Record summary
Source: RMDB library OK3TST, as collected in RNAgym. Structure probing data (DMS and 2A3) for a 207-nucleotide construct. For 2A3 the reverse transcriptase was SuperScript II with manganese. For DMS, 20,013 sequencing reads were counted. The RNA was probed in 150 mM KOAc, 10 mM MgCl2 and 150 mM bicine (pH 8.5) at 24 C. The 2A3 profile rests on 15,021 reads.
RNA sequence: GGGAACGACUCGAGUAGAGUCGAAAAGAGGUGAGACACAAUUUACAUGAAGAGAUGGUAAUAAUUGGCAGAUUAGUUACAUCAUGUCCAUUUGAAUUUGAAGGUUUUGAUUACAAAGAUGUGGCAGCCUUGAUGGACAAAAAUCCAUGGAAUGAAGGAUAAUCAAUAUGUUCGCAUAUUGAUUAUCAAAAGAAACAACAACAACAAC
Reactivity to DMS in 0.01 (KOAc 150mM, MgCl2 10mM, bicine 150mM(pH8.5), 24C), signal-to-noise 6, nucleotides 027 to 156: g010a080g020g030u000g010a110g020a110c080a070c060a080a100u000u000u000a040c070a070u000g010a070a060g010a140g010a050u000g010g030u000a050a080u000a030a090u000u000g010g020c110a110g010a110u000u000a090g010u000u010a060c040a060u000c030a190u000g020u000c020c010a070u010u010u010g010a080a140u000u000u010g010a060a080g030g030u000u000u000u000g020a100u000u000a110c070a050a080a180g010a110u000g020u010g010g010c010a090g000c030c020u000u010g010a050u000g050g010a060c050a020a060a030a050a300u000c030c010a040u010g010g020a060a070u000g010a100a140g010
Reactivity to 2A3 in 0.01 (KOAc 150mM, MgCl2 10mM, bicine 150mM(pH8.5), 24C), signal-to-noise 9, nucleotides 027 to 156: g070a020g000g040u050g020a050g030a020c020a000c010a100a040u070u100u170a080c060a060u090g040a070a050g020a010g010a060u050g040g010u040a040a030u050a070a050u090u040g040g000c030a010g010a090u050u080a040g090u060u080a040c010a040u060c020a040u070g030u000c020c010a020u040u030u110g110a130a100u120u090u130g060a040a040g030g000u040u070u160u120g060a060u040u050a030c030a050a160a030g080a100u090g020u030g030g000c000a010g010c020c000u020u050g020a010u020g000g000a010c000a010a110a010a010a010u030c040c020a020u060g040g050a070a070u150g040a070a020g140